[RMDB]
RNA sequence: GGGAACGACUCGAGUAGAGUCGAAAACUAGGAUUACAGAAAUGAGCUAUCUCACUUGGCCUAAUUGCUUGUCUUUUUAAUGGAGUGAAACCUCACUGUGGAGAUUGCAGGUUGGGGGGAACUUGUGACAAUACCUUUGUGGUGUUAACACCUUCAGUGUUUCUCUACAUUUCGAUGUAGAGAAACAAAAAGAAACAACAACAACAAC
Reactivity to 2A3 in 0.01 (KOAc 150mM, MgCl2 10mM, bicine 150mM(pH8.5), 24C), signal-to-noise 6, nucleotides 027 to 156: c010u030a030g050g020a050u090u150a080c040a050g100a040a190a090u090g030a060g030c080u090a050u190c040u020c060a060c060u050u060g050g000c020c020u100a120a110u100u070g040c070u040u080g010u070c010u030u120u020u050u140a110a110u110g040g000a020g020u040g030a050a040a040c010c020u040c010a030c020u040g040u080g070g020a080g040a150u070u080g020c030a000g010g050u060u070g030g000g000g000g000g000a020a010c010u030u030g010u020g040a010c030a040a050u090a140c010c010u080u120u140g070u100g040g020u030g010u050u030a040a010c010a040c040c010u060u090c050a060g060
Reactivity to DMS in 0.01 (KOAc 150mM, MgCl2 10mM, bicine 150mM(pH8.5), 24C), signal-to-noise 2, nucleotides 027 to 156: c010u010a040g020g010a080u000u010a110c070a110g000a050a050a060u010g000a080g000c120u000a100u000c050u000c050a010c070u020u010g000g010c030c020u010a080a100u000u000g010c040u000u000g000u000c010u000u000u000u000u000a060a150u010g000g000a080g040u010g010a120a080a080c050c010u000c010a050c050u010g060u000g040g020a140g020a100u010u000g000c000a030g030g020u000u000g000g010g020g070g020g000a140a040c040u000u000g000u010g000a050c080a050a100u010a150c040c000u000u000u010g060u020g030g000u000g000u000u010a050a100c060a070c060c010u000u010c040a180g040